[RMDB]
RNA sequence: GGGAACGACUCGAGUAGAGUCGAAAAAAGAAAAAAUUUGCAAUUCUUUCAUCCAUCUUGUCGAAAUAUAAGAAAAUCAUUCAGCUCGUAAUGCUAUUUAUCCGAAUGAAAUUCUAACUAAUAGCAACAGUAUAGUCGGAUUCGUCCGACUAUACUGAAAAGAAACAACAACAACAAC
Reactivity to DMS in 0.01 (KOAc 150mM, MgCl2 10mM, bicine 150mM(pH8.5), 24C), signal-to-noise 2, nucleotides 027 to 126: a040a060g050a000a000a180a070a050a170u020u000u030g000c180a080a100u010u000c030u000u000u010c020a220u010c000c050a080u000c070u020u000g010u000c050g000a120a080a070u030a110u000a020a130g000a140a080a080a170u010c030a000u020u030c030a150g000c300u030c190g000u000a070a000u000g000c010u000a040u030u010u020a010u050c270c080g000a000a000u000g000a030a000a220u000u010c040u020a030a040c230u020a020a070u000a010g000c020a060a110
Reactivity to 2A3 in 0.01 (KOAc 150mM, MgCl2 10mM, bicine 150mM(pH8.5), 24C), signal-to-noise 2, nucleotides 027 to 126: a010a000g120a060a070a010a030a060a090u230u140u230g040c010a060a070u030u010c030u000u040u130c090a060u080c010c050a030u040c110u170u100g120u200c010g050a090a100a030u140a060u060a050a030g020a020a030a000a050u030c060a010u000u080c050a020g100c110u090c130g150u160a100a040u140g030c000u010a080u050u210u130a030u070c070c020g010a000a010u040g070a010a130a060u070u020c060u030a040a050c030u060a080a020u050a110g050c010a010a060

Description: Chemical mapping of a 177-nucleotide RNA with DMS and 2A3. The reactions ran in a buffer of 150 mM KOAc, 10 mM MgCl2 and 150 mM bicine (pH 8.5), at 24 C. DMS adducts were read by reverse transcription with MarathonRT. High 2A3 reactivity points to a flexible backbone, as in loops and unpaired stretches. For 2A3, 569 sequencing reads were counted. 2A3 adducts were read by reverse transcription with SuperScript II with manganese.